[RMDB]
This 177-nucleotide RNA was probed chemically with DMS and 2A3. The 2A3 profile rests on 1,224 reads. 2A3 adducts were read by reverse transcription with SuperScript II with manganese. Source: RMDB library OK2TST, as collected in RNAgym.

RNA sequence: GGGAACGACUCGAGUAGAGUCGAAAACACUUCUCCUUAUAAUCAGAGAUCUAGGCUAUAUGUAAAUUUUAAGAGAUGAGGUGAAGAGGUAGGUAGGGUGGUCUGGUCUUGUUAAGUUUGGGCAUCAAUACUAACUCAUCUUCGGAUGAGUUAGUAUAAAAGAAACAACAACAACAAC
Reactivity to DMS in 0.01 (KOAc 150mM, MgCl2 10mM, bicine 150mM(pH8.5), 24C), signal-to-noise 5, nucleotides 027 to 126: c080a110c100u000u000c010u000c010c030u010u010a040u000a080a090u010c090a130g010a120g010a050u000c040u010a080g010g010c070u010a070u000a070u010g000u010a050a070a090u010u000u000u000a060a110g010a110g000a050u000g010a040g010g020u000g010a070a050g010a070g000g020u000a020g010g010u000a050g010g000g030u010g010g010u000c050u000g010g010u000c050u000u000g010u000u010a050a120g010u000u000u000g010g010g020c070a060u000c110a070
Reactivity to 2A3 in 0.01 (KOAc 150mM, MgCl2 10mM, bicine 150mM(pH8.5), 24C), signal-to-noise 1, nucleotides 027 to 126: c030a020c030u000u010c020u020c030c020u060u130a080u100a070a130u140c020a000g000a030g000a130u060c050u050a050g020g020c000u060a060u010a060u300g050u100a080a160a230u020u090u030u090a090a010g030a030g010a040u080g010a000g050g000u000g010a010a040g020a020g040g000u040a040g020g080u020a030g000g050g000u010g000g000u000c060u010g030g010u030c010u040u080g030u090u110a080a070g000u060u040u070g050g010g030c040a030u080c000a020